Background
Structure probing data (2A3 and DMS) for a 177-nucleotide construct. It was measured as part of the RMDB library OK2TST. For 2A3 the reverse transcriptase was SuperScript II with manganese. The DMS profile rests on 7,375 reads. For DMS the reverse transcriptase was MarathonRT. The RNA was probed in 150 mM KOAc, 10 mM MgCl2 and 150 mM bicine (pH 8.5) at 24 C.
RNA sequence: GGGAACGACUCGAGUAGAGUCGAAAAACUUGCUUUAAGGGAUAGUGAUCCCUGCUCACUCUUGCCGGAAGCAAGGCGUUUUUCGGGGGUUUCAAGACCAUGAUCCAUGCUAUUGCGCACACAGUGCGAAAAGUGUCCUGUUCGCAGGACACUUUUCAAAAGAAACAACAACAACAAC
Reactivity to 2A3 in 0.01 (KOAc 150mM, MgCl2 10mM, bicine 150mM(pH8.5), 24C), signal-to-noise 2, nucleotides 027 to 126: a030c020u030u030g000c000u060u100u110a110a070g000g000g020a040u040a060g100u050g070a070u100c000c030c070u040g000c000u010c000a010c000u010c020u090u110g230c010c000g050g010a020a000g000c010a010a010g050g000c070g020u070u100u000u040u010c000g060g010g000g000g010u020u010u090c030a030a030g040a010c020c030a030u070g020a040u040c030c020a000u060g030c000u080a130u200u220g040c070g000c000a020c010a020c030a100g080u040g070c030
Reactivity to DMS in 0.01 (KOAc 150mM, MgCl2 10mM, bicine 150mM(pH8.5), 24C), signal-to-noise 5, nucleotides 027 to 126: a100c020u000u000g000c010u000u000u010a150a090g000g000g010a030u000a060g010u010g010a150u010c040c040c030u000g000c300u000c020a040c020u000c070u000u000g010c010c020g010g000a070a090g000c020a010a020g000g000c110g010u000u000u000u000u000c030g010g000g010g010g010u000u000u000c090a060a080g010a120c070c030a050u010g010a060u000c040c030a080u010g010c080u000a070u000u010g000c070g020c020a040c060a060c140a100g010u000g010c080